[RMDB]
RNA sequence: GGGAACGACUCGAGUAGAGUCGAAAACAUCAAGGGAAGAUCCUCGGAGAUGAUCAUCUGUGGUGGCGUGAACAUUGCGCCCGACGAGGUCGAUCGCAUCGCGGAGGGCGUGUCGGGCGUCCGCGAGCUGAUCCUAAAAAUUCGUUUUUAGGAUCAGAAAAGAAACAACAACAACAAC
Reactivity to DMS in 0.01 (KOAc 150mM, MgCl2 10mM, bicine 150mM(pH8.5), 24C), signal-to-noise 7, nucleotides 027 to 126: c050a070u020c100a070a110g000g010g000a080a080g020a040u010c020c020u010c060g020g020a120g000a060u010g000a040u000c060a070u010c030u020g010u010g000g020u020g010g000c040g010u010g000a090a080c160a090u030u030g010c020g000c010c000c010g010a040c040g010a070g020g010u010c030g000a080u010c060g010c050a140u010c150g000c000g010g010a120g000g010g010c020g000u010g010u010c020g010g000g010c010g000u000c030c030g020c040g000a090g020
Reactivity to 2A3 in 0.01 (KOAc 150mM, MgCl2 10mM, bicine 150mM(pH8.5), 24C), signal-to-noise 9, nucleotides 027 to 126: c030a060u150c060a050a080g070g010g030a060a080g040a120u070c020c030u040c060g060g020a080g010a080u140g020a030u070c030a030u010c040u080g090u060g060g070u080g020g010c030g030u070g050a100a050c060a170u120u240g000c010g000c000c000c000g010a010c010g040a040g040g080u050c060g080a080u070c030g000c080a090u080c060g010c010g050g040a040g040g070g000c040g020u080g050u070c040g020g030g000c000g010u020c010c010g040c010g000a010g010
The data come from the RNA Mapping Database (RMDB), library OK1LIB. The record gives the reactivity of an RNA of 177 nucleotides to DMS and 2A3. For 2A3, 18,900 sequencing reads were counted. 2A3 adducts were read by reverse transcription with SuperScript II with manganese. For DMS the reverse transcriptase was MarathonRT. The RNA was probed in 150 mM KOAc, 10 mM MgCl2 and 150 mM bicine (pH 8.5) at 24 C. For DMS, 28,058 sequencing reads were counted.